[RMDB]
RNA sequence: GGGAACGACUCGAGUAGAGUCGAAAAACAUCUAUGAUGUGGAUGUGCUUCUGGUGCCCACCACGCCAAUCACUGCACGGCCUAUCGAUGACGUGGAGCCUUAUGUCAGCAUCAAUGGCCGCAAGGAGCGGCCCGUAAGGUUCGCCUUACGGGCCGCAAAAGAAACAACAACAACAAC
Reactivity to 2A3 in 0.01 (KOAc 150mM, MgCl2 10mM, bicine 150mM(pH8.5), 24C), signal-to-noise 2, nucleotides 027 to 126: a010c020a050u010c030u100a090u170g140a070u150g120u090g120g020a060u000g040u050g060c040u070u100c100u090g110g020u080g020c030c000c000a000c000c010a000c050g010c010c010a080a090u060c060a040c150u080g010c090a050c020g000g000c010c000u130a140u130c050g060a020u070g030a040c080g290u070g000g150a070g050c000c010u130u160a110u190g140u060c040a030g000c000a070u000c010a100a100u070g000g000c090c000g000c000a000a070g040g020a090
Reactivity to DMS in 0.01 (KOAc 150mM, MgCl2 10mM, bicine 150mM(pH8.5), 24C), signal-to-noise 2, nucleotides 027 to 126: a030c010a020u000c030u000a100u000g020a140u020g010u000g000g010a060u000g000u000g010c100u000u010c060u000g000g030u000g060c050c000c020a270c000c010a150c100g000c070c060a060a140u010c080a100c070u000g010c120a140c040g010g010c020c010u000a100u000c100g000a040u000g010a020c020g000u000g000g000a140g000c060c110u030u000a100u010g010u000c040a070g030c020a050u000c040a000a090u000g020g010c000c020g020c110a110a090g000g000a140